Conditions: 150 mM KOAc, 10 mM MgCl2 and 150 mM bicine (pH 8.5), 24 C.
This 207-nucleotide RNA was probed chemically with 2A3.
For 2A3 the reverse transcriptase was SuperScript II with manganese.

RNA sequence: GGGAACGACUCGAGUAGAGUCGAAAAGAGAGGGUAACCACCGGCGCGCGUCACUGAUAUAUCCACCGGGGGGUUAGGGGAGAAAAGGAUACAGCGCGACGAAGUUAGCACGCUGCCCCGUAAGGCUUGAAGAGUGUAGUGUUCGCACUACACUCAACGUAGAUGUGGAGUUCGCUCCACAUCUACGAAAAGAAACAACAACAACAAC
Reactivity to 2A3 in 0.01 (KOAc 150mM, MgCl2 10mM, bicine 150mM(pH8.5), 24C), signal-to-noise 1, nucleotides 027 to 156: g100a000g020a010g020g020g040u110a050a060c050c000a080c080c010g050g000c010g000c000g000c020g050u040c050a030c130u010g010a020u030a040u030a040u180c050c040a080c070c120g000g000g050g000g000g030u040u040a000g060g000g000g000a060g120a000a030a020a000g020g020a000u060a050c010a010g020c000g000c020g000a000c010g000a050a040g110u110u150a010g080c040a010c080g040c040u090g030c000c000c000c000g000u020a030a000g020g040c000u120u100g060a170a110g000a060g040u040g000u000a000g000u000g060u050u070c120g010c100a000c000u000a000c000a000c000u000c000a000a000